The data come from the RNA Mapping Database (RMDB), libraries RFM100 and RFMREP. The record gives the reactivity of an RNA of 177 nucleotides to DMS. Reactivities are rounded to 0.1 and cut off at 0 and 3. For DMS the reverse transcriptase was MarathonRT. Conditions: 150 mM KOAc, 10 mM MgCl2 and 150 mM bicine (pH 8.5), 24 C.
RNA sequence: GGGAACGACUCGAGUAGAGUCGAAAAACGGUCCUACUACGGUAGGACCGACGAAAUGUUGCACAAUCAGCAAGUUAGCGUCACUGUAGUAAAUAAAAGAACCUGCCUCACCAGCAGGUUUUUUUAAAACUCAAGCCAUAUUCGUAUGGCUUGAGUUAAAAGAAACAACAACAACAAC
Reactivity to DMS in 0.01 (KOAc 150mM, MgCl2 10mM, bicine 150mM(pH8.5), 24C), signal-to-noise 3, nucleotides 027 to 126: a140c050g040g000u010c000c000u030a010c000u000a100c180g040g040u000a010g000g000a000c000c000g000a020c050g010a060a080a120u030g000u000u000g000c020a210c170a110a070u060c090a080g000c050a080a070g000u040u000a090g000c080g010u000c080a100c100u010g000u040a110g000u030a100a060a240u010a030a000a010a030g010a000a040c020c000u000g000c000c000u000c300a100c240c300a280g000c010a000g000g000u000u000u000u000u000u000u000a000a010